[RMDB]
Notes: An RNA of 177 nucleotides, treated with 2A3 and DMS and read out base by base.
RNA sequence: GGGAACGACUCGAGUAGAGUCGAAAAACCUAUGGAUUCGUCCAUAGGUGCUGGCGCGCGGCCUUUGUCCUGUCGCGUGUGGGUGGUGGGCGAUAUACGCGCAAUAGUGACAAUUCGUUGUCACUAAUAAUUAUGUGGCUUUCGAGCCACAUAAUUAAAAAGAAACAACAACAACAAC
Reactivity to 2A3 in 0.01 (KOAc 150mM, MgCl2 10mM, bicine 150mM(pH8.5), 24C), signal-to-noise 1, nucleotides 027 to 126: a020c010c000u010a000u010g020g010a040u030u120c200g080u020c060c000a000u000a010g000g020u010g000c100u060g030g000c000g000c020g000c000g010g000c040c000u110u110u180g110u130c000c040u010g020u030c000g000c000g010u010g000u000g000g020g080u030g000g070u120g000g000g020c040g030a020u060a000u010a240c070g040c010g000c090a040a040u060a050g000u000g010a000c000a010a010u040u060c210g050u130u040g020u000c000a010c010u030a010a040
Reactivity to DMS in 0.01 (KOAc 150mM, MgCl2 10mM, bicine 150mM(pH8.5), 24C), signal-to-noise 3, nucleotides 027 to 126: a040c010c000u000a000u000g000g020a040u000u010c200g010u000c000c000a010u000a000g010g020u000g010c120u010g020g000c050g000c020g020c020g000g030c020c140u010u010u000g010u000c130c110u000g000u000c040g010c000g020u010g020u000g010g000g010u000g000g010u010g000g000g020c200g000a060u000a040u000a060c130g020c070g010c130a100a100u000a010g000u000g000a010c010a020a040u000u010c180g000u000u000g010u000c000a010c000u010a020a050
The reactions ran in a buffer of 150 mM KOAc, 10 mM MgCl2 and 150 mM bicine (pH 8.5), at 24 C.